Structure probing data (2A3 and DMS) for a 207-nucleotide construct. For 2A3 the reverse transcriptase was SuperScript II with manganese. Reactivities are rounded to 0.1 and cut off at 0 and 3. For 2A3, 5,719 sequencing reads were counted. The RNA was probed in 150 mM KOAc, 10 mM MgCl2 and 150 mM bicine (pH 8.5) at 24 C.
RNA sequence: GGGAACGACUCGAGUAGAGUCGAAAAGUAAUCGCCUGACACUUCCUCGUUACAUCGUAGGCGCCAUCCGAAACGUACGUGGAUGGGAAAGCAUGCAGAUACGACCGUGUGAUCGCGUACGGAAACCAUCCGCAUGCGAAAGGAUGGUUAGACGUACGGACUCUCACUUAUUCGUAAGUGAGAGUCCAAAAGAAACAACAACAACAAC
Reactivity to 2A3 in 0.01 (KOAc 150mM, MgCl2 10mM, bicine 150mM(pH8.5), 24C), signal-to-noise 7, nucleotides 027 to 156: g060u060a050a080u060c070g000c010c020u070g060a020c010a020c100u090u060c020c030u070c040g070u090u130a090c070a190u120c100g090u110a040g050g000c020g010c000c000a010u040c010c010g070a130a190a110c030g040u060a020c030g010u050g020g000a020u010g020g000g040a060a020a000g070c040a020u170g000c040a040g050a110u070a080c030g070a120c100c050g080u110g040u070g100a110u130c060g000c030g070u030a050c030g030g040a100a070a010c000c000a000u010c000c000g030c030a040u150g020c020g000a060a040a000g010g000a000u010g000g010u000u010a030g020a030c020g050u080a030c030
Reactivity to DMS in 0.01 (KOAc 150mM, MgCl2 10mM, bicine 150mM(pH8.5), 24C), signal-to-noise 2, nucleotides 027 to 156: g030u000a080a110u010c010g010c030c000u010g000a150c090a130c060u000u000c020c030u010c060g000u000u000a070c080a080u000c040g030u000a080g010g040c020g010c020c030a040u000c020c000g010a070a090a250c090g030u000a060c010g020u000g030g000a060u030g000g010g000a050a090a170g000c040a110u000g020c030a110g020a170u000a060c050g010a120c050c010g020u000g050u000g000a090u000c030g040c030g030u000a040c000g010g000a150a110a120c020c040a050u010c010c000g000c020a050u000g010c040g050a080a120a300g000g010a010u010g000g020u000u000a050g000a100c040g020u000a130c160